Conditions: 150 mM KOAc, 10 mM MgCl2 and 150 mM bicine (pH 8.5), 24 C. The record gives the reactivity of an RNA of 207 nucleotides to DMS and 2A3. For 2A3, 2,326 sequencing reads were counted.
RNA sequence: GGGAACGACUCGAGUAGAGUCGAAAAGUGCGGAUGCCGGCAUGAGUAACGAUAAAAGAAGUGAGAAUCUUCUUCGCCGUAAGGACAAGGGUUCCUGGGGAAGGGUCGUCCGCCCAGGGAAAGUCGGGACCUAAGGUGAGGCCGAACGGCGCAGCCGACAGUACGUGAGAUUCGUCUCACGUACUGUAAAAGAAACAACAACAACAAC
Reactivity to DMS in 0.01 (KOAc 150mM, MgCl2 10mM, bicine 150mM(pH8.5), 24C), signal-to-noise 1, nucleotides 027 to 156: g000u000g030c010g000g000a060u000g010c050c040g000g030c040a090u000g000a190g020u000a060a140c040g010a110u000a050a090a050a000g010a020a030g000u000g020a240g020a300a230u000c010u020u010c010u000u000c010g030c010c010g000u020a090a080g000g000a090c040a080a170g020g010g020u000u000c010c010u000g010g000g000g040a070a130g000g030g040u020c060g000u000c030c020g020c030c010c010a130g010g020g000a050a040a050g010u000c030g000g010g000a140c000c020u000a070a110g000g040u000g000a070g030g010c000c000g010a040a160c080g010g010c000g000c000a140g000c030c000g010
Reactivity to 2A3 in 0.01 (KOAc 150mM, MgCl2 10mM, bicine 150mM(pH8.5), 24C), signal-to-noise 3, nucleotides 027 to 156: g040u040g020c010g000g020a050u080g030c040c030g030g010c030a030u040g020a000g050u060a090a070c080g030a080u120a140a120a010a000g010a010a000g000u000g010a050g030a060a090u020c000u000u000c000u000u020c020g010c010c020g010u060a040a070g000g010a030c060a040a090g090g000g010u040u030c010c010u010g000g000g010g040a180a030g050g030g010u160c050g060u050c020c050g070c030c000c000a030g010g000g030a070a060a000g050u080c020g000g000g040a010c000c010u050a060a010g040g010u040g050a060g000g030c010c010g020a050a020c110g000g000c050g000c020a020g020c010c020g010